[RMDB]
RNA sequence: GGGAACGACUCGAGUAGAGUCGAAAACUCAUUCUCUUCCAACUGGAACGCAUUCACUUCCGCAGGCAACAGCAUUUUCCGCUCAAAUACCAAAGCCAACACAAACAGAAAAAUUGCCCAUAGAAUAUGUUACUCUCGCAUUCGUGCGAGAGUAACAAAAAGAAACAACAACAACAAC
Reactivity to 2A3 in 0.01 (KOAc 150mM, MgCl2 10mM, bicine 150mM(pH8.5), 24C), signal-to-noise 1, nucleotides 027 to 126: c010u010c040a020u160u090c020u000c000u020u090c000c010a060a000c030u040g110g000a090a070c010g010c040a020u040u140c060a040c050u000u010c000c000g020c000a010g060g000c000a050a000c000a140g010c040a060u000u000u000u090c030c010g060c060u090c090a030a080a030u090a030c000c010a200a040a040g010c000c020a120a080c060a000c040a060a100a000c040a070g030a020a110a000a000a080u080u100g060c000c000c030a080u060a030g050a040a050u130a160